[RMDB]
RNA sequence: GGGAACGACUCGAGUAGAGUCGAAAAGUAGAGUGUAUCAUCUCAGUAAGCAUGCCGGGGAAUGGUGGUUUACCCCGUUAUCAAAUGAUUACCGACCAAUAAUUGGCGAAACUCGUUUCGCGUUGGCAAAGUCACGGCGUGUUCGCACGCCGUGAAACCUACGAAAGGGAUUCGUCCCUUUCGUAGGAAAAGAAACAACAACAACAAC
Reactivity to DMS in 0.01 (KOAc 150mM, MgCl2 10mM, bicine 150mM(pH8.5), 24C), signal-to-noise 1, nucleotides 027 to 156: g050u000a070g010a050g020u000g020u000a150u000c020a140u000c060u000c040a050g000u000a030a120g010c040a050u000g020c130c060g030g000g060g000a030a110u000g020g010u000g000g000u000u000u020a230c020c010c020c000g010u000u000a080u000c300a050a090a080u020g000a090u000u000a000c000c040g000a090c030c040a030a110u000a120a200u000u000g040g020c000g020a070a090a020c060u010c140g050u010u010u000c000g030c020g000u000u030g010g000c050a060a090a140g030u000c000a030c020g010g000c010g050u000g030u000u020c250g000c030a020c010g020c000c010g060u000g000a000a040a060
Reactivity to 2A3 in 0.01 (KOAc 150mM, MgCl2 10mM, bicine 150mM(pH8.5), 24C), signal-to-noise 2, nucleotides 027 to 156: g090u120a030g020a010g040u040g030u050a070u120c010a080u040c030u010c080a060g050u100a110a020g050c050a040u050g080c060c010g000g000g000g000a030a030u060g020g010u020g040g000u000u010u080a050c000c000c000c000g020u030u010a020u030c000a000a000a110u140g020a020u040u060a030c010c030g040a100c020c060a000a030u140a170a080u090u180g070g010c010g020a000a020a020c100u070c140g130u000u010u010c000g000c000g000u000u000g000g010c050a050a020a130g050u020c000a000c000g000g010c010g020u010g050u030u030c050g020c120a000c000g000c000c000g000u000g000a000a000a000

The data come from the RNA Mapping Database (RMDB), library M2RFPK.
The record gives the reactivity of an RNA of 207 nucleotides to DMS and 2A3.
The reactions ran in a buffer of 150 mM KOAc, 10 mM MgCl2 and 150 mM bicine (pH 8.5), at 24 C.
For 2A3, 1,193 sequencing reads were counted.